[RMDB]
Annotation
The record gives the reactivity of an RNA of 177 nucleotides to DMS. The RNA was probed in 150 mM KOAc, 10 mM MgCl2 and 150 mM bicine (pH 8.5) at 24 C.
RNA sequence: GGGAACGACUCGAGUAGAGUCGAAAAACUUAAUGGGGUGGUCACGGCUUUCUCCUUGAGGAAAAUAACCAUUAAUCACGGUUAAGGGACCUUGUGGCGUUGCAAUAUCGGCCAUGAUAAUACGGCGCUAGAAUUUUGUUUUCGAACAAAAUUCUAGAAAAGAAACAACAACAACAAC
Reactivity to DMS in 0.01 (KOAc 150mM, MgCl2 10mM, bicine 150mM(pH8.5), 24C), signal-to-noise 3, nucleotides 027 to 126: a110c080u010u000a050a060u010g010g000g020g020u000g020g020u000c070a070c170g010g000c070u000u010u000c050u000c030c070u000u010g010a080g010g000a050a080a070a080u000a060a030c020c010a070u000u010a120a050u010c200a090c140g010g000u010u010a060a060g010g000g010a130c030c040u000u000g020u000g000g010c030g000u020u000g000c090a070a110u020a070u000c060g010g010c030c030a100u000g010a050u000a090a090u010a070c140g000g010c070g020